[RMDB]
RNA sequence: GGGAACGACUCGAGUAGAGUCGAAAAGAUAUGGACGUAGGGAGCAGGAUACUACCCACCUCGGAAACGAGAGGUAUCACUGCUUUGAUCUACGUCCUAAGUCAAAAGGGCAUGUUCGCAUGCCCAAGCGUACUCUCUAGUUCGCUAGAGAGUACGCAAAAGAAACAACAACAACAAC
Reactivity to DMS in 0.01 (KOAc 150mM, MgCl2 10mM, bicine 150mM(pH8.5), 24C), signal-to-noise 1, nucleotides 027 to 126: g000a120u010a150u010g000g030a000c020g000u000a010g020g000g000a000g050c000a000g030g000a000u000a000c000u000a110c050c020c080a300c140c000u000c000g000g000a100a060a280c010g020a040g000a140g000g000u000a000u000c010a110c010u000g000c020u000u010u000g000a030u000c010u000a000c010g000u020c000c010u000a010a020g080u030c200a020a010a060a060g010g000g000c010a000u000g020u000u000c160g040c000a020u000g030c000c000c000a010a000